[RMDB]
RNA sequence: GGGAACGACUCGAGUAGAGUCGAAAACGCCCAUGCGGCGCAUGUCGAUGACGAUGCGGUUGAAGGAAACCCCGAGGACCUCGGCCACCAGCUUCUGCACUUCGGUGGGGUUCUGGGUCGAGCAAUACGAUCCUAUUACUUUCGAGUAAUAGGAUCGAAAAGAAACAACAACAACAAC
Reactivity to DMS in 0.01 (KOAc 150mM, MgCl2 10mM, bicine 150mM(pH8.5), 24C), signal-to-noise 5, nucleotides 027 to 126: c210g000c010c000c010a120u010g010c070g020g010c010g010c030a030u010g000u000c040g010a160u010g010a040c030g010a050u010g010c020g020g010u000u010g010a090a080g000g010a110a090a080c050c000c000c030g010a110g000g000a100c190c000u000c050g010g000c010c050a110c300c050a050g000c100u010u000c060u000g020c020a050c050u010u010c180g030g010u000g000g010g010g000u000u000c010u000g000g010g010u000c020g000a040g000c140a110a100u010a150
Reactivity to 2A3 in 0.01 (KOAc 150mM, MgCl2 10mM, bicine 150mM(pH8.5), 24C), signal-to-noise 3, nucleotides 027 to 126: c030g010c000c020c030a040u180g050c080g080g010c030g010c040a050u080g010u050c060g270a210u260g020a040c060g110a040u030g030c010g140g080u110u070g100a120a030g010g030a100a100a070c010c020c010c010g030a060g040g030a040c000c010u000c000g020g020c000c030a070c020c010a010g020c080u060u040c010u170g090c020a020c040u060u100c120g070g010u010g010g050g000g030u040u000c020u030g040g000g010u000c020g000a010g020c030a030a050u110a190